[RMDB]
RNA sequence: GGGAACGACUCGAGUAGAGUCGAAAAAGAGCUACUGAUAGGAUGCGGGGGCUUCACCGCCUACCAACUCCUGAUAAACUCCGAAUGCUAUAAAAUAUACACAGCAGUGAGGGCAUGGGUGCUAAGGUCAUCGAUUAAUCUUCGGAUUAAUCGAUGAAAAAGAAACAACAACAACAAC
Reactivity to DMS in 0.01 (KOAc 150mM, MgCl2 10mM, bicine 150mM(pH8.5), 24C), signal-to-noise 9, nucleotides 027 to 126: a070g010a050g000c040u010a080c110u010g020a140u030a030g020g010a020u000g000c300g000g000g000g010g000c010u000u000c300a140c220c220g000c000c000u000a100c010c010a070a300c210u000c000c010u000g000a110u000a060a110a160c060u000c010c030g010a110a050u010g000c020u000a070u020a040a060a050a090u040a070u010a120c130a060c120a040g010c040a030g000u010g010a110g000g000g010c050a030u010g000g000g000u000g000c040u020a070a110g000g010
Reactivity to 2A3 in 0.01 (KOAc 150mM, MgCl2 10mM, bicine 150mM(pH8.5), 24C), signal-to-noise 8, nucleotides 027 to 126: a000g080a010g020c050u130a040c040u100g050a100u130a110g000g000a010u030g010c020g010g000g000g000g000c000u040u040c030a030c030c020g000c000c000u170a300c030c000a000a010c010u000c000c000u010g000a010u040a020a100a010c010u020c010c000g060a100a030u050g010c020u030a020u110a170a100a040a010u220a020u030a040c080a010c030a050g030c000a040g090u030g070a090g020g020g000c050a030u070g060g020g000u070g030c040u050a040a030g100g020